[RMDB]
RNA sequence: GGGAACGACUCGAGUAGAGUCGAAAACCACAGAUCUUCGGAUCUGUGGAAACAACAAAUACUGUCAGUUGAGACAGACACAAAAACAUUGAGUGUACAAUGAAAGCGAUUGCUUCGGCAAUCGCAAGCAGUACUAUAUCUUCGGAUAUAGUACUGCAAAAGAAACAACAACAACAAC
Reactivity to 2A3 in 0.01 (KOAc 150mM, MgCl2 10mM, bicine 150mM(pH8.5), 24C), signal-to-noise 8, nucleotides 027 to 126: c000c000a010c000a000g000a000u000c010u100u210c270g120g000a000u010c000u010g000u010g000g020a050a070a010c030a020a000c010a000a120a050u200a160c010u010g010u020c010a180g050u150u180g200a070g010a080c020a000g060a020c030a000c010a080a220a010a110a010c040a040u050u100g030a050g160u160g040u150a080c040a050a070u100g080a200a070a020g000c000g010a000u000u000g000c000u050u070c210g080g000c010a000a010u000c000g000c000a000a010
Reactivity to DMS in 0.01 (KOAc 150mM, MgCl2 10mM, bicine 150mM(pH8.5), 24C), signal-to-noise 4, nucleotides 027 to 126: c000c000a020c000a000g010a010u000c000u010u000c180g050g010a000u000c000u000g040u000g000g000a010a070a050c070a070a050c110a050a100a090u000a130c000u000g010u010c000a160g020u010u010g010a110g010a010c010a010g000a120c180a050c130a040a040a040a090a140c070a060u000u000g010a190g030u000g000u010a120c100a060a030u010g010a090a130a120g000c010g000a010u000u000g000c000u000u000c140g030g000c000a000a000u000c010g030c000a020a050